About this RNA
This 177-nucleotide RNA was probed chemically with DMS and 2A3. The DMS profile rests on 2,860 reads. The 2A3 profile rests on 1,285 reads. For DMS the reverse transcriptase was MarathonRT. The RNA was probed in 150 mM KOAc, 10 mM MgCl2 and 150 mM bicine (pH 8.5) at 24 C.

[RMDB]
RNA sequence: GGGAACGACUCGAGUAGAGUCGAAAAGAGAGAAUGAAAAGGAUAGCAAGGUGAAGCCUCCUGAUGCCACCAUCGUAGUAGAAGGAGUCAAAUAUCAGGUAAAAAAGAAAGGUAAGGUGAAGGGAAAACGUACAUGGUUCUUCGGAACCAUGUACGUAAAAGAAACAACAACAACAAC
Reactivity to DMS in 0.01 (KOAc 150mM, MgCl2 10mM, bicine 150mM(pH8.5), 24C), signal-to-noise 3, nucleotides 027 to 126: g000a050g000a050g030a110a040u000g010a040a020a110a150g000g010a020u020a050g030c300a080a060g000g000u030g020a050a170g000c110c040u000c020c030u020g000a140u000g020c090c050a040c040c180a060u030c100g000u000a070g050u010a060g000a240a110g000g000a030g010u030c050a090a100a090u070a100u000c050a040g000g050u000a000a050a060a040a050a030g010a030a050a050g010g000u020a040a050g000g010u030g000a020a060g000g000g000a040a000a040
Reactivity to 2A3 in 0.01 (KOAc 150mM, MgCl2 10mM, bicine 150mM(pH8.5), 24C), signal-to-noise 2, nucleotides 027 to 126: g030a000g040a000g040a040a110u130g070a070a020a000a000g070g010a080u060a030g030c070a060a000g010g070u120g020a070a020g020c000c000u060c000c000u000g000a020u070g020c000c010a030c010c000a090u130c030g070u130a120g020u060a000g050a090a070g060g000a030g010u060c020a110a040a000u190a070u010c050a000g030g000u100a070a000a090a050a000a000g100a030a010a000g050g050u060a020a040g020g020u020g050a010a020g050g000g000a030a040a000